The record gives the reactivity of an RNA of 207 nucleotides to DMS and 2A3. For DMS, 1,745 sequencing reads were counted. For 2A3 the reverse transcriptase was SuperScript II with manganese. Conditions: 150 mM KOAc, 10 mM MgCl2 and 150 mM bicine (pH 8.5), 24 C.

[RMDB]
RNA sequence: GGGAACGACUCGAGUAGAGUCGAAAACGAUCAUGUGACGGCAUCAACCUCCAGCCCACCAUUCCAAGGUUGCAACGACGUGAUCUCCGGCAUUAUUAGAAGACGAACCAAUGAUGCAGAGGAAAUGGCGGUUUUUGUGAUGGAUGGCAACAUUUGCCUUGCAGGACUAGUUCGCUAGUCCUGCAAGAAAAGAAACAACAACAACAAC
Reactivity to DMS in 0.01 (KOAc 150mM, MgCl2 10mM, bicine 150mM(pH8.5), 24C), signal-to-noise 1, nucleotides 027 to 156: c030g000a050u000c020a050u020g050u010g010a200c070g010g040c050a170u000c050a050a040c050c000u000c070c030a100g010c060c040c070a110c030c010a120u010u000c020c030a030a180g000g040u030u000g000c030a050a110c050g000a070c030g050u000g000a080u000c000u000c040c020g010g000c000a030u000u000a040u000u000a060g030a080a110g040a200c200g010a140a160c060c030a080a090u000g010a050u000g060c020a110g000a080g000g020a010a100a130u010g040g000c030g010g020u020u000u020u000u000g020u000g010a130u000g010g010a040u000g010g020c050a020a090c130a230u000u000u000g090c050
Reactivity to 2A3 in 0.01 (KOAc 150mM, MgCl2 10mM, bicine 150mM(pH8.5), 24C), signal-to-noise 1, nucleotides 027 to 156: c020g010a010u150c070a120u150g020u020g090a040c040g040g000c030a060u010c030a170a070c010c030u070c050c030a020g000c030c000c000a050c010c000a100u050u010c010c060a020a040g060g030u070u020g040c010a060a130c060g040a000c010g020u010g020a040u000c000u020c010c010g020g000c040a010u010u020a020u060u060a070g060a170a010g070a110c090g020a040a040c080c040a050a060u040g050a030u000g000c020a000g050a020g160g010a000a100a000u140g030g040c090g000g000u000u030u040u070u060g050u030g030a020u070g000g100a080u030g060g060c030a050a020c000a130u070u080u120g060c020
DMS adducts were read by reverse transcription with MarathonRT.